[RMDB]
RNA sequence: GGGAACGACUCGAGUAGAGUCGAAAAAGAAAAGCGGAGGAGGGUUAUGGAUUGCGCUAAGUCCGCCCGCGCGUGGAGUGGGCUGGAAUUCGUGAAUGGAGGAUAAUUAAUGCCGCGCGCCCAAAAAUCUUACCAAUUGGUUCGCCAAUUGGUAAGAAAAAGAAACAACAACAACAAC
Reactivity to DMS in 0.01 (KOAc 150mM, MgCl2 10mM, bicine 150mM(pH8.5), 24C), signal-to-noise 1, nucleotides 027 to 126: a060g030a090a060a100a150g000c060g000g040a090g010g000a050g000g000g000u000u010a050u040g010g000a050u010u000g020c030g020c100u010a040a060g000u000c000c040g000c040c000c040g010c040g000c130g000u000g010g000a100g050u000g010g020g000c020u010g020g000a110a040u010u000c070g020u000g000a070a060u000g010g010a160g000g000a080u000a060a080u000u000a070a090u030g010c050c000g000c050g010c030g000c000c010c030a010a050a040a040a080

An RNA of 177 nucleotides, treated with DMS and read out base by base. For DMS, 968 sequencing reads were counted. Conditions: 150 mM KOAc, 10 mM MgCl2 and 150 mM bicine (pH 8.5), 24 C. For DMS the reverse transcriptase was MarathonRT.